[RMDB]
RNA sequence: GGGAACGACUCGAGUAGAGUCGAAAACUUGAGCCCUUAGUGAGCGUGGUCAGCUGCCGCUUACAAUCGGACUCGAUUAGUUGGCCCGGAAUAAAAGGGCAUCGGCUUAGUCCGUGACACCGAUUCAGUCAUUGCUCGUCUUCGGAUGAGUAAUGACAAAAGAAACAACAACAACAAC
Reactivity to DMS in 0.01 (KOAc 150mM, MgCl2 10mM, bicine 150mM(pH8.5), 24C), signal-to-noise 9, nucleotides 027 to 126: c020u000u020g000a030g010c010c000c000u000u010a180g000u000g010a040g010c010g020u020g020g010u010c070a070g010c030u000g000c050c010g010c050u000u020a040c110a110a090u030c160g000g000a010c040u010c050g010a100u030u020a020g010u000u000g000g010c000c000c010g000g000a090a060u030a050a060a090a080g000g000g020c010a030u010c010g000g000c040u030u020a110g000u030c010c030g010u010g000a070c140a130c030c010g000a090u010u020c120a120
Reactivity to 2A3 in 0.01 (KOAc 150mM, MgCl2 10mM, bicine 150mM(pH8.5), 24C), signal-to-noise 9, nucleotides 027 to 126: c010u040u100g030a010g010c000c000c000u000u030a070g020u050g060a040g100c050g030u200g030g050u110c050a030g030c050u100g040c030c020g020c020u070u140a060c040a040a110u060c020g010g030a040c020u010c060g040a100u100u110a010g010u010u020g020g010c000c040c000g000g030a110a070u190a050a110a020a010g010g000g000c020a030u070c010g010g000c020u060u090a030g030u040c010c030g030u070g020a020c040a030c040c020g040a030u080u080c030a010

This 177-nucleotide RNA was probed chemically with DMS and 2A3. DMS (dimethyl sulfate) methylates the pairing face of unpaired adenines and cytosines. Values cover nucleotides 27 to 126. For DMS the reverse transcriptase was MarathonRT.